[RMDB]
RNA sequence: GGGAACGACUCGAGUAGAGUCGAAAAGGGUUUGGAUUACAUCAAUAGUCACAUGAGCAGAAGUAAACAGAACAAGAAGUACUGCGGUUAUUCAAGUUCAAAGUUCACACUAUCGGAAUAAAUUGAAUGAGUACCAUGGAUUCGUCCAUGGUACUCAAAAAGAAACAACAACAACAAC
Reactivity to DMS in 0.01 (KOAc 150mM, MgCl2 10mM, bicine 150mM(pH8.5), 24C), signal-to-noise 2, nucleotides 027 to 126: g000g020g010u000u000u000g000g010a130u000u000a070c060a070u010c040a060a070u000a060g030u010c040a050c090a160u010g000a090g010c030a110g030a050a100g040u020a070a020a060c100a130g000a010a040c060a080a220g000a050a070g010u000a030c020u000g050c100g010g000u000u010a130u000u000c000a040a300g010u020u000c000a050a040a170g010u010u010c060a010c090a060c060u000a070u000c060g020g010a050a020u020a050a020a070u000u000g030a060a150